[RMDB]
RNA sequence: GGGAACGACUCGAGUAGAGUCGAAAAUCUUGUGUCGCUUCUGUUAAUCGACAACUCAGCCACUACAGGAACUACAGACUAGCAAAGGAAGUGAUGGGCAUCGAGUACAUCAAAGUCCCACUGGCGCCCACGGCACGAUAUUCGUAUCGUGCCGUGGAAAAGAAACAACAACAACAAC
Reactivity to DMS in 0.01 (KOAc 150mM, MgCl2 10mM, bicine 150mM(pH8.5), 24C), signal-to-noise 1, nucleotides 027 to 126: u000c050u000u000g010u020g000u010c060g030c090u000u020c070u020g010u040u000a090a110u010c090g020a070c090a050a090c050u000c020a050g010c010c010a040c050u010a050c040a060g000g000a050a090c030u000a110c110a080g020a100c120u000a090g000c030a120a060a110g000g000a070a060g010u010g000a060u000g000g010g040c020a100u010c080g020a070g020u010a040c080a040u000c010a010a060a200g010u000c010c000c010a200c070u000g040g010c090g000c150
Reactivity to 2A3 in 0.01 (KOAc 150mM, MgCl2 10mM, bicine 150mM(pH8.5), 24C), signal-to-noise 1, nucleotides 027 to 126: u110c010u030u040g010u000g030u040c020g000c060u020u020c030u170g070u110u170a110a020u070c060g030a030c030a040a060c070u050c040a020g060c040c020a030c020u040a030c040a090g060g060a070a020c020u050a040c050a080g090a070c030u050a020g030c100a080a050a130g010g050a010a040g090u050g130a110u080g010g020g080c000a050u060c070g020a020g050u040a000c050a050u020c010a000a070a000g010u030c030c020c000a030c010u040g060g040c000g060c010
Notes: Structure probing data (DMS and 2A3) for a 177-nucleotide construct. DMS adducts were read by reverse transcription with MarathonRT. The RNA was probed in 150 mM KOAc, 10 mM MgCl2 and 150 mM bicine (pH 8.5) at 24 C. For DMS, 738 sequencing reads were counted.